Structure probing data (2A3 and DMS) for a 207-nucleotide construct.

RNA sequence: GGGAACGACUCGAGUAGAGUCGAAAAAAUAAUCUUCAGGGCAGGGCGAAAUUCCCGAUCGGCGGUAAAGUCCGCGAGCCGAACGAAAAAGGUUUGGCAGGAACCGGUGAGAUUCCGGUACCGACAGCAAAGCCUCAACACUUCGGUGUUGAGGCAACGAUAGAAGAAGAUUCGUCUUCUUCUAUCGAAAAGAAACAACAACAACAAC
Reactivity to 2A3 in 0.01 (KOAc 150mM, MgCl2 10mM, bicine 150mM(pH8.5), 24C), signal-to-noise 2, nucleotides 027 to 156: a000a000u180a010a020u040c040u150u120c060a040g040g010g030c020a020g000g000g000c000g010a020a050a110u060u030c010c030c030g030a110u130c040g000g000c010g000g020u000a000a000a000g000u000c000c000g000c010g000a010g000c010c000g000a000a000c000g090a040a060a170a010a100g120g000u020u000u000g000g010c000a000g000g030a000a000c000c000g000g000u000g000a010g000a000u000u000c000c000g010g000u000a000c000c000g000a000c000a000g070c020a020a100a050g000c000c000u000c000a010a000c000a000c000u080u100c230g110g000u010g000u000u000g000a000g010g000c000a000a000
Reactivity to DMS in 0.01 (KOAc 150mM, MgCl2 10mM, bicine 150mM(pH8.5), 24C), signal-to-noise 1, nucleotides 027 to 156: a070a090u000a100a030u010c070u000u010c050a080g020g010g040c050a100g010g020g050c000g010a020a080a230u000u000c000c000c040g000a050u000c010g000g020c000g070g000u000a150a090a000g000u000c000c010g020c010g000a280g000c020c010g000a010a070c050g020a060a120a180a170a200g010g000u010u000u000g000g000c020a080g000g030a040a000c000c010g040g000u010g010a300g010a300u000u000c000c000g030g000u000a000c000c010g030a040c050a060g000c090a050a060a170g020c000c000u000c000a020a000c000a000c000u000u000c300g020g020u020g000u000u000g000a010g000g000c010a000a000